Chemical mapping of a 177-nucleotide RNA with 2A3 and DMS. 2A3 adducts were read by reverse transcription with SuperScript II with manganese. The RNA was probed in 150 mM KOAc, 10 mM MgCl2 and 150 mM bicine (pH 8.5) at 24 C. The 2A3 profile rests on 16,212 reads. For DMS, 11,580 sequencing reads were counted. DMS adducts were read by reverse transcription with MarathonRT.

[RMDB]
RNA sequence: GGGAACGACUCGAGUAGAGUCGAAAAGAUAUGGACCCAGUACAACGCAUCGAUCUAAAUCGGAAACGAUUUAGGGAGCGUGUACGGGUCCUAAGUCAAAACACUGCAGACUUCGGUCUGCAGUGAAGAAAGGGAGAUAGUUCGCUAUCUCCCUUUCAAAAGAAACAACAACAACAAC
Reactivity to 2A3 in 0.01 (KOAc 150mM, MgCl2 10mM, bicine 150mM(pH8.5), 24C), signal-to-noise 5, nucleotides 027 to 126: g000a000u020a010u050g010g000a000c010c000c050a020g010u010a010c130a300a130c130g030c030a130u300c110g010a010u010c010u010a000a010a000u010c010g010g000a020a010a010c010g000a000u000u010u000a010g000g000g010a020g000c030g010u050g000u010a000c000g000g020g000u000c000c000u000a010a010g010u000c020a020a000a120a130c020a010c010u000g000c000a000g010a020c000u130u220c300g140g000u020c010u010g000c000a000g000u000g000a020a020
Reactivity to DMS in 0.01 (KOAc 150mM, MgCl2 10mM, bicine 150mM(pH8.5), 24C), signal-to-noise 7, nucleotides 027 to 126: g010a030u000a150u010g010g000a010c000c000c000a170g040u000a010c020a120a220c110g030c010a300u010c240g010a040u020c000u000a010a010a010u000c000g010g000a050a030a090c000g000a010u000u000u000a000g000g010g000a010g020c000g060u000g010u000a000c000g010g010g010u000c000c000u000a000a070g000u000c010a130a130a160a210c010a000c000u000g000c000a000g010a020c000u000u010c250g040g000u000c000u000g010c000a000g010u000g000a070a080